Conditions: 150 mM KOAc, 10 mM MgCl2 and 150 mM bicine (pH 8.5), 24 C. This 177-nucleotide RNA was probed chemically with DMS and 2A3. Reactivities are given for positions 27 through 126. DMS adducts were read by reverse transcription with MarathonRT. The DMS profile rests on 5,387 reads.
RNA sequence: GGGAACGACUCGAGUAGAGUCGAAAAUGCGGAUCAGAAGCUUGGAGACUGGUAUCGACGGUAAGUACAUAGACAGAGACAGAGUUCGGAUCGUCUUCAAUUCAAUCAAUCCAUAAAUCGAUACAAGCCAUAUACGUCAGUUCGCUGACGUAUAUGGAAAAGAAACAACAACAACAAC
Reactivity to DMS in 0.01 (KOAc 150mM, MgCl2 10mM, bicine 150mM(pH8.5), 24C), signal-to-noise 4, nucleotides 027 to 126: u040g040c070g020g020a010u000c070a120g000a060a070g020c270u020u000g000g000a030g000a010c010u030g000g010u010a020u030c030g000a030c040g020g020u010a050a080g050u000a050c100a190u020a100g020a100c220a150g010a170g010a070c070a070g020a300g020u040u010c030g040g000a030u030c010g020u000c030u000u000c020a000a030u030u020c090a050a020u000c110a100a030u000c020c000a060u020a030a040a130u020c040g010a050u010a040c270a100a090g020
Reactivity to 2A3 in 0.01 (KOAc 150mM, MgCl2 10mM, bicine 150mM(pH8.5), 24C), signal-to-noise 8, nucleotides 027 to 126: u230g010c080g010g010a010u040c030a090g030a080a010g050c040u040u040g020g000a020g010a030c110u130g020g070u140a170u200c010g010a010c010g020g040u090a150a050g030u040a070c040a060u130a060g140a090c070a050g240a010g040a110c040a020g130a030g120u160u060c030g030g020a040u030c010g010u010c000u010u040c020a040a070u120u070c020a010a060u050c000a000a010u010c010c010a030u130a090a120a040u120c080g040a010u020a160c040a070a010g010